[RMDB]
This 177-nucleotide RNA was probed chemically with 2A3 and DMS. 2A3 adducts were read by reverse transcription with SuperScript II with manganese. The reactions ran in a buffer of 150 mM KOAc, 10 mM MgCl2 and 150 mM bicine (pH 8.5), at 24 C. The 2A3 profile rests on 5,477 reads. For DMS, 26,770 sequencing reads were counted. It was measured as part of the RMDB library OK1LIB.
RNA sequence: GGGAACGACUCGAGUAGAGUCGAAAAGCUGACGUGUGCAGAAGUCUGAAGGCAUUAUAUCAGCGAGGUCUGUGGUGACUAAAAGCCUGAGUUGGAUGCAUGGUUGGAAGGGUGGUGGAUCCUGCGACGUAGCCAAUUAAUUCGUUAAUUGGCUACGAAAAGAAACAACAACAACAAC
Reactivity to 2A3 in 0.01 (KOAc 150mM, MgCl2 10mM, bicine 150mM(pH8.5), 24C), signal-to-noise 7, nucleotides 027 to 126: g020c020u040g000a010c010g100u090g050u050g070c000a020g040a260a040g090u030c050u100g110a080a030g060g000c010a020u070u080a070u120a030u150c010a020g030c020g100a050g010g040u040c020u040g120u070g090g050u070g040a060c040u140a050a080a010a020g030c010c020u080g010a090g050u070u080g070g010a040u050g030c030a040u050g080g060u120u090g040g020a090a080g050g000g030u100g010g020u040g020g010a040u020c010c010u040g010c020g030a010
Reactivity to DMS in 0.01 (KOAc 150mM, MgCl2 10mM, bicine 150mM(pH8.5), 24C), signal-to-noise 7, nucleotides 027 to 126: g000c020u000g000a050c070g040u020g010u010g010c040a050g010a120a100g010u020c060u010g010a130a070g010g010c030a070u010u020a080u030a140u010c050a050g000c060g000a110g000g010u010c030u010g000u010g000g010u020g010a060c080u020a040a070a120a130g000c020c000u000g010a100g010u010u010g010g010a100u010g000c040a040u010g000g000u020u020g000g010a070a070g010g000g010u000g000g010u010g000g010a050u000c050c010u000g020c110g010a160